[RMDB]
RNA sequence: GGGAACGACUCGAGUAGAGUCGAAAACUCCAGUUACCGAUUGCGCACUGGCUGAUGAAGAACGUCGAUAACGGAAUCUUCAAGGGCAGCGACUUCGAGCCAGUUAUCGUGACUGGCCUGGAUGCGCGCCACGAUGGUGAUUCGUCACCAUCGUGGCAAAAGAAACAACAACAACAAC
Reactivity to DMS in 0.01 (KOAc 150mM, MgCl2 10mM, bicine 150mM(pH8.5), 24C), signal-to-noise 2, nucleotides 027 to 126: c080u000c000c050a110g030u010u010a080c150c040g000a070u000u000g020c030g060c070a230c030u000g000g030c010u010g000a200u000g000a050a000g020a100a090c080g000u000c060g030a160u030a140a040c060g010g000a140a160u000c030u000u000c030a090a300g000g010g000c000a050g020c070g000a080c140u010u000c030g010a100g030c000c000a020g000u000u000a040u000c300g000u000g000a000c000u000g010g000c010c020u000g030g000a000u010g030c060g030c040
Reactivity to 2A3 in 0.01 (KOAc 150mM, MgCl2 10mM, bicine 150mM(pH8.5), 24C), signal-to-noise 2, nucleotides 027 to 126: c030u010c020c010a040g050u120u120a100c080c070g060a160u030u200g070c030g000c050a040c030u040g090g110c000u010g070a220u150g020a030a010g020a040a070c040g050u070c190g120a050u090a250a040c030g010g060a150a150u020c000u020u020c000a020a050g040g030g000c000a000g050c020g050a070c000u030u030c030g000a000g000c000c000a000g000u000u060a230u170c180g060u170g040a000c000u010g020g000c000c000u020g010g000a040u120g000c000g000c040
Chemical mapping of a 177-nucleotide RNA with DMS and 2A3. The DMS profile rests on 1,339 reads. For DMS the reverse transcriptase was MarathonRT. 2A3 adducts were read by reverse transcription with SuperScript II with manganese.